[RMDB]
RNA sequence: GGGAACGACUCGAGUAGAGUCGAAAAGAUAUGGAGUCUCAGCUUUACACGGCGCAUUCCGAGGAUCGUACUGGGUCGGAAACGACCUUACGGGAGGAAUGCGCCGUGUAAAGGGACUCCUAAGUCACAGAUAGACGUACUUCGGUACGUCUAUCUGAAAAGAAACAACAACAACAAC
Reactivity to DMS in 0.01 (KOAc 150mM, MgCl2 10mM, bicine 150mM(pH8.5), 24C), signal-to-noise 3, nucleotides 027 to 126: g010a040u000a300u010g000g000a040g010u010c010u000c300a290g000c160u000u010u000a010c020a010c020g010g010c000g040c000a010u000u000c010c000g000a140g020g010a030u030c000g000u010a030c300u000g010g000g000u010c000g020g000a100a120a280c000g000a020c000c000u000u000a010c010g020g020g010a040g000g000a010a000u000g010c000g000c000c000g000u000g020u000a000a000a030g000g000g020a010c000u000c000c000u000a000a060g010u000c030a290

Annotation:
Chemical mapping of a 177-nucleotide RNA with DMS. Source: RMDB library TTRINS, as collected in RNAgym.